Chemical mapping of a 177-nucleotide RNA with DMS and 2A3. For 2A3 the reverse transcriptase was SuperScript II with manganese. Source: RMDB library OK1LIB, as collected in RNAgym. Reactivities are given for positions 27 through 126. The reactions ran in a buffer of 150 mM KOAc, 10 mM MgCl2 and 150 mM bicine (pH 8.5), at 24 C.
RNA sequence: GGGAACGACUCGAGUAGAGUCGAAAAAAGACGUACGUAUUGUAAGAGAUAUGCGUAAUUCUGUUAACCGACUCGUUAAUUGUGAAACGGCAAAUCUAAAUAAAACAGUUAGUGCUGCGAUGAAACAAUCUGUCAUUACUUUCGAGUAAUGACAGAUAAAAGAAACAACAACAACAAC
Reactivity to DMS in 0.01 (KOAc 150mM, MgCl2 10mM, bicine 150mM(pH8.5), 24C), signal-to-noise 6, nucleotides 027 to 126: a060a010g000a030c090g010u000a010c040g010u000a040u000u020g000u020a150a110g010a140g030a060u010a030u000g000c000g010u000a030a050u010u000c010u000g000u020u010a090a170c060c040g000a060c130u030c100g010u010u000a070a090u010u050g000u010g000a060a050a070c060g000g000c020a030a040a120u010c040u010a020a040a050u000a050a050a080a110c250a090g000u000u000a030g010u010g000c140u000g010c030g030a110u010g000a080a050a030c170a050
Reactivity to 2A3 in 0.01 (KOAc 150mM, MgCl2 10mM, bicine 150mM(pH8.5), 24C), signal-to-noise 9, nucleotides 027 to 126: a000a020g040a010c020g020u030a000c000g030u000a020u020u190g200u180a160a070g040a010g020a190u090a000u090g000c000g010u000a000a060u050u020c010u040g070u110u070a060a030c030c030g090a080c060u040c060g070u060u150a110a130u140u090g050u020g130a090a050a030c030g040g000c020a020a000a080u010c030u110a050a050a080u240a070a130a070a010c030a050g060u050u110a020g010u070g040c020u010g030c050g100a120u120g090a080a040a010c050a010
Source information
2A3 is a SHAPE reagent: it acylates the 2'-hydroxyl of flexible nucleotides of all four kinds. DMS (dimethyl sulfate) methylates the pairing face of unpaired adenines and cytosines. For DMS the reverse transcriptase was MarathonRT.